Conditions: 150 mM KOAc, 10 mM MgCl2 and 150 mM bicine (pH 8.5), 24 C. An RNA of 177 nucleotides, treated with 2A3 and DMS and read out base by base. Reactivities are given for positions 27 through 126.
RNA sequence: GGGAACGACUCGAGUAGAGUCGAAAAACAGACGAAAGUGGUCUCCAGCGGUUUGCCUUGGGCGCUGAUAGGAAUGGUUUUCAGCUCGAUACCAAUAUCGGCAAAAUCCUGUUCAGGUUUACUGCCCAGCUACUGCGAAGUUCGCUUCGCAGUAGCUAAAAGAAACAACAACAACAAC
Reactivity to 2A3 in 0.01 (KOAc 150mM, MgCl2 10mM, bicine 150mM(pH8.5), 24C), signal-to-noise 1, nucleotides 027 to 126: a000c020a010g090a010c030g090a080a060a060g090u090g100g050u060c010u000c010c000a070g020c030g000g090u080u040u150g010c010c020u080u100g030g000g010c050g090c060u040g030a030u050a000g070g100a000a150u110g030g050u110u060u090u080c070a050g020c160u190c090g030a020u020a030c020c020a040a060u050a010u160c010g020g000c000a070a030a000a020u050c000c000u050g050u130u030c040a000g070g000u050u090u090a090c050u110g040c010c030c000
Reactivity to DMS in 0.01 (KOAc 150mM, MgCl2 10mM, bicine 150mM(pH8.5), 24C), signal-to-noise 1, nucleotides 027 to 126: a090c080a130g010a070c090g000a050a070a120g020u010g010g000u000c020u000c040c020a110g000c030g000g040u000u000u010g010c040c030u000u000g010g010g000c070g010c020u000g000a020u010a070g000g010a100a120u000g000g010u010u000u000u000c070a090g000c070u020c100g000a020u000a070c160c130a090a090u000a070u000c020g000g010c000a090a020a060a110u000c010c020u000g000u000u000c080a070g000g010u000u020u010a100c090u010g000c010c030c030
Source: RMDB library OK2TST, as collected in RNAgym.